[RMDB]
RNA sequence: GGGAACGACUCGAGUAGAGUCGAAAACGCAGAGGGUUCUGAUAACAAAGAACCUAGAUAGCCGCAUCGGUAUUAUAGGAUGUAGUCGGUGAGCCGGAAUGGCUGCAUCGUAAGCCUAUAAGUAAAUUUAAGUGUAAUCACUUCGGUGAUUACACAAUCCCUGAACAUAGUUCGCUAUGUUCAGGGAAAAAGAAACAACAACAACAAC
Reactivity to DMS in 0.01 (KOAc 150mM, MgCl2 10mM, bicine 150mM(pH8.5), 24C), signal-to-noise 1, nucleotides 027 to 156: c060g030c030a070g020a170g000g000g020u020u010c020u020g000a180u000a090a160c300a190a120a110g000a020a060c000c000u000a020g010a190u000a230g010c030c070g000c110a090u030c040g000g010u020a070u020u000a040u000a000g030g010a040u000g030u010a210g060u000c000g000g000u010g020a040g010c030c000g020g000a190a150u000g000g010c000u020g020c010a040u000c040g010u010a100a130g020c010c020u000a020u000a010a090g020u000a020a020a090u020u000u000a050a130g010u000g000u000a000a020u000c000a000c000u000u000c280g020g000u010g000a030u000u000a010c000a000c050a030a140
Reactivity to 2A3 in 0.01 (KOAc 150mM, MgCl2 10mM, bicine 150mM(pH8.5), 24C), signal-to-noise 2, nucleotides 027 to 156: c070g020c090a020g030a090g040g010g000u010u000c000u010g090a090u080a290a070c050a010a060a000g000a000a010c000c000u010a000g020a030u110a000g070c120c060g160c090a120u120c180g120g000u150a020u170u010a010u000a000g030g000a050u020g050u050a040g170u130c000g000g020u000g020a020g000c000c010g180g160a290a110u200g090g000c000u060g140c000a000u000c000g000u000a050a000g020c000c020u020a010u000a050a020g020u050a020a200a240u190u130u170a120a060g000u000g000u000a000a000u000c000a000c000u000u010c030g030g000u000g000a000u000u000a010c000a020c000a000a000
An RNA of 207 nucleotides, treated with DMS and 2A3 and read out base by base.
The reactions ran in a buffer of 150 mM KOAc, 10 mM MgCl2 and 150 mM bicine (pH 8.5), at 24 C.
2A3 adducts were read by reverse transcription with SuperScript II with manganese.